The record gives the reactivity of an RNA of 177 nucleotides to 2A3 and DMS. For 2A3 the reverse transcriptase was SuperScript II with manganese. For 2A3, 1,482 sequencing reads were counted. Source: RMDB library M2PK50, as collected in RNAgym.

RNA sequence: GGGAACGACUCGAGUAGAGUCGAAAAGCUGUACGCUUCGGCGUACAGCAAAUAAAAUCAGCGCUUAAAAAGCAGGCGUUAUAACCGCUGAACGCCUGCUUAAAAGUACUACCUUCGGGUAGUACAAGUGUAAAUCCUUGUUCGCAAGGAUUUACACAAAAGAAACAACAACAACAAC
Reactivity to 2A3 in 0.01 (KOAc 150mM, MgCl2 10mM, bicine 150mM(pH8.5), 24C), signal-to-noise 1, nucleotides 027 to 126: g010c010u000g010u000a010c000g010c000u020u110c200g120g010c020g000u000a010c020a000g010c010a000a000a000u020a010a000a010a010u090c020a030g080c050g010c250u090u140a170a090a040a000a000g000c000a000g020g000c000g000u010u020a040u080a140a050c060c040g010c050u070g020a010a000c010g040c020c010u030g000c020u000u010a000a020a040a000g000u000a000c000u010a000c010c000u010u030c270g110g010g000u000a000g010u000a000c000a000a010
Reactivity to DMS in 0.01 (KOAc 150mM, MgCl2 10mM, bicine 150mM(pH8.5), 24C), signal-to-noise 1, nucleotides 027 to 126: g010c000u000g010u000a020c010g020c000u000u040c150g030g020c000g060u010a000c010a000g010c020a020a040a050u000a080a080a080a070u010c110a050g000c140g030c150u000u000a050a080a070a050a000g000c000a020g020g010c000g000u010u000a040u000a050a070c030c060g070c030u010g000a000a030c000g020c000c000u000g010c010u000u000a010a050a010a160g020u000a010c000u000a010c000c010u000u010c180g020g040g010u000a040g020u000a010c000a050a050